The record gives the reactivity of an RNA of 177 nucleotides to DMS and 2A3. For 2A3 the reverse transcriptase was SuperScript II with manganese. Source: RMDB library OK2TST, as collected in RNAgym. Reactivities are given for positions 27 through 126. The reactions ran in a buffer of 150 mM KOAc, 10 mM MgCl2 and 150 mM bicine (pH 8.5), at 24 C.
RNA sequence: GGGAACGACUCGAGUAGAGUCGAAAAGCCAUAAAGGCCGGGAAAGUCGUCAAAUGAAGACAGCAAUUUUCAUGUCAACGCUCCGUCAUCAGAUACCAGGUGCAGGAGCAGGGCGAUCCUCGACUCCAAGUACGAGGAUGUUCGCAUCCUCGUACUUAAAAGAAACAACAACAACAAC
Reactivity to DMS in 0.01 (KOAc 150mM, MgCl2 10mM, bicine 150mM(pH8.5), 24C), signal-to-noise 3, nucleotides 027 to 126: g010c030c020a100u000a100a130a170g020g010c000c010g000g000g000a090a080a100g010u000c020g010u000c020a050a100a080u010g000a030a010g000a030c070a140g030c300a120a170u010u000u000u000c080a040u000g020u000c130a080a200c170g000c000u010c000c010g000u000c040a020u000c030a050g000a200u010a080c250c170a070g020g020u000g010c140a060g010g000a010g020c000a070g010g020g020c000g000a040u000c090c020u000c030g000a020c050u000c070c160
Reactivity to 2A3 in 0.01 (KOAc 150mM, MgCl2 10mM, bicine 150mM(pH8.5), 24C), signal-to-noise 2, nucleotides 027 to 126: g000c010c010a000u130a080a260a030g010g010c040c000g010g000g040a110a200a020g050u030c000g000u020c030a060a090a120u080g020a030a040g000a010c010a050g060c050a080a060u020u020u050u170c030a010u040g030u010c020a060a020c080g010c010u000c010c000g040u030c010a030u010c010a010g080a200u150a200c070c010a040g000g000u000g000c010a040g030g020a030g000c000a010g010g000g010c010g010a000u040c020c040u030c020g030a040c000u000c030c020